[RMDB]
RNA sequence: GGGAACGACUCGAGUAGAGUCGAAAAGAUCAGCCAUGGUCCAACAUUUAUGUGCAACAUCUCAGGCUGUGCUGUGAGCCCGGCUAUCCAUUUCUCCUUCACCAGCUACAACUUUGGGACCUGCUUUAUCUAUCAAGCUGGGAUGCCCCCAUACAAAGACUAAUUAAAUCUUCGGAUUUAAUUAGUCAAAAGAAACAACAACAACAAC
Reactivity to 2A3 in 0.01 (KOAc 150mM, MgCl2 10mM, bicine 150mM(pH8.5), 24C), signal-to-noise 5, nucleotides 027 to 156: g020a030u080c020a000g020c020c020a060u130g020g000u030c040c020a090a050c040a150u130u280u170a180u210g070u070g040c060a090a050c000a150u060c050u020c050a020g060g000c030u030g030u040g010c010u030g040u060g040a030g020c010c010c000g000g030c030u050a040u050c030c020a090u070u100u040c020u060c000c020u040u050c040a040c070c010a040g060c010u130a090c050a160a080c080u100u150u080g030g000g020a040c000c010u000g000c010u070u100u080a110u110c080u020a120u150c070a040a000g010c000u020g000g000g010a000u030g010c020c020c010c010c010a020u060a050c050a010a050a040
Reactivity to DMS in 0.01 (KOAc 150mM, MgCl2 10mM, bicine 150mM(pH8.5), 24C), signal-to-noise 2, nucleotides 027 to 156: g010a070u000c050a060g030c020c040a110u000g000g000u000c040c000a060a110c060a090u010u010u010a090u010g030u000g040c020a110a090c030a100u010c030u000c050a090g050g030c000u000g040u010g000c020u010g020u000g010a070g010c030c010c100g000g000c070u000a070u010c020c040a100u000u000u000c040u000c030c020u000u000c050a070c060c020a040g010c010u000a060c050a040a100c110u000u010u010g010g050g020a150c020c030u000g050c040u010u020u000a120u020c050u000a120u000c060a040a100g030c010u000g010g010g010a070u000g010c040c010c020c000c020a100u000a130c050a080a060a280